[RMDB]
RNA sequence: GGGAACGACUCGAGUAGAGUCGAAAAUGUUUGUAAUGGUGAUUUACAACGCGUUUUCACUGUCUGCAAAUGCUAGACUUACUCAAUUAGGGAUAUUAUCUAGUGUUGGUGCAUCACCAAAACAAAUAUGGACCCAUAAUUUCGAUUAUGGGUCCAUAAAAGAAACAACAACAACAAC
Reactivity to 2A3 in 0.01 (KOAc 150mM, MgCl2 10mM, bicine 150mM(pH8.5), 24C), signal-to-noise 4, nucleotides 027 to 126: u140g070u020u000u000g020u010a050a070u040g000g000u000g000a030u010u050u070a080c050a100a050c020g050c060g050u010u040u070u150c070a060c070u090g060u070c030u060g000c020a130a160a160u110g000c040u060a020g010a020c000u030u150a080c000u030c060a080a300u150u170a220g020g000g020a030u080a090u160u090a080u040c030u050a030g000u010g000u020u010g070g050u090g030c000a030u000c000a000c000c040a000a020a030a030c000a000a020a010u090
Reactivity to DMS in 0.01 (KOAc 150mM, MgCl2 10mM, bicine 150mM(pH8.5), 24C), signal-to-noise 2, nucleotides 027 to 126: u000g020u000u000u000g010u050a000a140u020g000g010u000g000a030u010u000u010a020c000a050a060c150g020c050g010u000u000u010u000c060a230c200u020g090u030c030u080g000c050a030a020a050u000g000c020u020a000g000a040c100u000u040a080c000u000c000a070a190u020u060a210g000g000g000a180u000a000u000u000a140u000c030u000a000g040u000g000u020u000g000g050u000g000c120a010u000c000a000c000c010a060a010a150a070c050a000a060a040u000